[RMDB]
RNA sequence: GGGAACGACUCGAGUAGAGUCGAAAAAGAUGGUGUUGAUGGGUCGGCUGAGAAAGGCGCCCGAGAGUUUGGCGUACAUGUUUUGGGCCGCAAUGCGCGUGGCGCCCGUCACCACACAGUCCAAGACCGAAGUACGAGGAUUCGUCCUCGUACUUCGAAAAGAAACAACAACAACAAC
Reactivity to DMS in 0.01 (KOAc 150mM, MgCl2 10mM, bicine 150mM(pH8.5), 24C), signal-to-noise 2, nucleotides 027 to 126: a120g000a100u010g020g000u010g010u000u010g000a030u000g000g000g000u030c030g020g060c000u000g030a170g020a070a050a100g010g000c010g010c000c020c030g000a100g010a090g010u020u010u020g010g030c080g020u010a070c000a040u060g010u010u010u010u010g000g000g000c030c000g000c080a090a070u020g000c070g010c110g000u030g000g000c060g000c010c000c040g010u010c000a010c020c040a020c010a060c050a070g000u020c000c110a130a170g010a140c190
Reactivity to 2A3 in 0.01 (KOAc 150mM, MgCl2 10mM, bicine 150mM(pH8.5), 24C), signal-to-noise 5, nucleotides 027 to 126: a010g140a090u120g000g000u010g010u010u020g010a010u020g000g000g030u080c070g030g010c020u070g010a020g070a180a100a030g060g010c020g000c030c000c030g100a110g000a020g050u130u190u190g020g000c030g030u130a070c080a140u110g180u060u050u040u060g090g010g000c040c030g010c090a060a100u200g040c090g040c100g070u200g100g000c020g000c000c000c000g000u000c000a000c010c010a010c000a000c000a000g040u000c030c010a010a040g070a040c060